[RMDB]
RNA sequence: GGGAACGACUCGAGUAGAGUCGAAAAAAUAGAUGACUUAUUGAAACAAGGGGUGUUAACGCCUCAAAAUAGUACAAUGAAUACACCAGUGUAUCCUGUUCCUAAACCAGAUGGAAGGUGGAGAAUGCUGAAUAAUCAUGUUCGCAUGAUUAUUCAGAAAAGAAACAACAACAACAAC
Reactivity to DMS in 0.01 (KOAc 150mM, MgCl2 10mM, bicine 150mM(pH8.5), 24C), signal-to-noise 6, nucleotides 027 to 126: a080a060u000a070g000a080u000g000a160c060u000u010a070u000u010g000a140a060a060c100a120a080g010g000g000g010u010g020u010u020a100a100c130g010c010c010u000c010a030a040a050a070u000a090g000u000a050c030a020a020u000g010a050a040u010a070c060a030c060c030a080g030u010g020u010a070u000c010c020u000g010u000u000c010c010u000a040a080a080c080c050a080g010a100u010g020g000a070a050g000g020u000g000g010a080g010a080a080u010g010
Reactivity to 2A3 in 0.01 (KOAc 150mM, MgCl2 10mM, bicine 150mM(pH8.5), 24C), signal-to-noise 4, nucleotides 027 to 126: a000a000u210a040g110a090u100g010a020c020u060u080a020u090u120g070a110a060a000c050a140a130g020g000g000g000u030g010u100u100a130a070c050g000c000c000u010c000a080a100a000a030u080a010g030u010a010c020a030a060u070g030a050a030u090a060c020a010c020c040a040g050u010g020u100a040u020c000c010u010g010u030u010c000c000u020a080a040a090c060c010a050g020a120u050g020g060a040a050g060g030u040g030g020a030g030a100a070u120g040

This 177-nucleotide RNA was probed chemically with DMS and 2A3. It was measured as part of the RMDB library OK2TRN. Conditions: 150 mM KOAc, 10 mM MgCl2 and 150 mM bicine (pH 8.5), 24 C.